[RMDB]
RNA sequence: GGGAACGACUCGAGUAGAGUCGAAAAGAUAUGGAGGGAGUGCUUUGAUCUGUGACCUCGGAAACGAGGUACAGGGAGCAUCUCCUAAGUCAAAACAGUAUCUAUAAGUUCGCUUAUAGAUACUGAACUAAUGAUUACACUUCGGUGUAAUCAUUAGAAAAGAAACAACAACAACAAC
Reactivity to DMS in 0.01 (KOAc 150mM, MgCl2 10mM, bicine 150mM(pH8.5), 24C), signal-to-noise 7, nucleotides 027 to 126: g010a080u000a140u010g010g010a220g000g020g000a070g030u000g010c000u000u000u020g010a070u020c000u000g010u000g000a030c000c000u000c000g010g000a100a070a200c000g010a010g000g010u000a000c000a000g010g010g000a010g000c000a010u000c020u000c000c000u000a030a070g010u010c050a070a080a110a250c010a010g000u000a000u000c000u000a000u000a010a010g010u000u010c270g020c000u000u000a000u000a010g000a010u000a000c000u000g000a020a120
Reactivity to 2A3 in 0.01 (KOAc 150mM, MgCl2 10mM, bicine 150mM(pH8.5), 24C), signal-to-noise 8, nucleotides 027 to 126: g060a060u200a070u220g070g040a120g050g070g020a080g050u020g000c010u290u240u100g110a140u090c010u010g040u100g300a190c000c000u010c000g010g020a060a080a010c010g000a000g010g000u000a000c000a000g000g010g000a000g000c000a030u130c000u000c010c000u000a050a000g030u030c030a010a000a130a180c010a010g010u010a000u000c000u010a000u000a020a010g030u040u150c240g080c140u010u000a000u000a000g000a000u000a000c000u000g000a000a000
Chemical mapping of a 177-nucleotide RNA with DMS and 2A3. For DMS the reverse transcriptase was MarathonRT. For DMS, 12,685 sequencing reads were counted. The 2A3 profile rests on 21,610 reads.